[RMDB]
RNA sequence: GGGAACGACUCGAGUAGAGUCGAAAACAGUGAUGGAAACAUCACUGAAAAACGUGGGAGCGCAGCACGAAAAAGUCGAUCGAAUACCGAUCGACAAGCGCUAAAGUCAUGCCGAAAGGCAUGACAACCAUGCGAUUUACUUCGGUAAAUCGCAUGGAAAAGAAACAACAACAACAAC
Reactivity to 2A3 in 0.01 (KOAc 150mM, MgCl2 10mM, bicine 150mM(pH8.5), 24C), signal-to-noise 3, nucleotides 027 to 126: c010a000g010u010g000a000u010g000g000a030a040a010c000a000u000c000a000c000u000g000a050a000a000a000a000c010g000u000g010g010g070a090g000c000g000c000a010g050c000a020c080g270a080a020a040a030a000g000u010c000g000a000u000c000g010a030a050u140a300c160c010g000a000u000c000g000a000c010a000a000g000c000g000c010u000a080a000a000g000u000c000a000u000g000c000c000g030a100a030a030g000g000c000a000u000g000a010c000a000a010
Reactivity to DMS in 0.01 (KOAc 150mM, MgCl2 10mM, bicine 150mM(pH8.5), 24C), signal-to-noise 2, nucleotides 027 to 126: c030a030g000u000g000a000u000g000g000a300a150a170c000a010u000c000a040c000u030g030a010a090a120a110a300c000g000u030g010g000g000a030g020c000g030c020a300g000c000a030c040g000a080a100a010a050a020g000u000c100g000a010u000c020g000a050a090u000a110c300c000g010a010u000c000g000a000c000a080a020g000c070g010c010u040a090a020a140g000u050c000a000u000g010c000c000g010a060a030a270g000g000c000a000u000g000a000c030a050a110

Conditions: 150 mM KOAc, 10 mM MgCl2 and 150 mM bicine (pH 8.5), 24 C. This 177-nucleotide RNA was probed chemically with 2A3 and DMS. Source: RMDB library OK1LIB, as collected in RNAgym.